[RMDB]
RNA sequence: GGGAACGACUCGAGUAGAGUCGAAAAUAUCAGUGCUUUCUGUUGAAUUUGAGAAUUUGAACCUGCAAUUUUCUGAUGUGAACAGGCAAAAGCUUAAAAUUGUUGAAAGUAGACCACCGGAGUGUGAAUUGGAAGCAAAUAAGGCAGUUAUUAUCAAAUUAAGCAUUACAUUCGUGUAAUGCUUAAUAAAAGAAACAACAACAACAAC
Reactivity to 2A3 in 0.01 (KOAc 150mM, MgCl2 10mM, bicine 150mM(pH8.5), 24C), signal-to-noise 2, nucleotides 027 to 156: u200a020u030c010a030g060u010g060c020u020u120u000c020u040g040u130u060g050a090a160u060u030u030g060a050g050a060a090u080u120u100g030a070a090c000c000u030g000c050a080a130u030u000u050u100c030u150g040a050u030g050u030g050a020a000c030a000g010g010c000a000a000a110a000g010c000u050u050a080a140a030a060u120u040g020u010u010g020a060a040a040g030u080a040g020a060c000c050a030c040c010g030g010a090g000u060g010u020g010a060a180u110u060g000g000a010a000g040c050a000a000a130u100a060a030g040g100c020a020g030u030u030a080u180u000a070u190c010a000a000
Reactivity to DMS in 0.01 (KOAc 150mM, MgCl2 10mM, bicine 150mM(pH8.5), 24C), signal-to-noise 3, nucleotides 027 to 156: u010a100u010c050a130g020u010g010c030u000u000u000c010u030g030u000u000g000a110a100u000u000u000g010a090g000a120a100u000u010u010g020a110a070c030c010u020g000c060a050a110u000u010u000u010c050u030g020a120u000g040u000g040a090a060c010a010g000g030c040a050a110a070a120g010c010u000u000a030a060a060a120u000u000g010u000u000g000a070a050a110g040u010a160g000a070c020c020a050c050c030g000g040a090g030u000g020u000g020a060a090u000u010g020g000a050a100g020c050a050a050a080u000a080a120g010g030c050a070g010u000u010a050u000u000a120u000c030a060a110

Conditions: 150 mM KOAc, 10 mM MgCl2 and 150 mM bicine (pH 8.5), 24 C.
Structure probing data (2A3 and DMS) for a 207-nucleotide construct.
For 2A3, 704 sequencing reads were counted.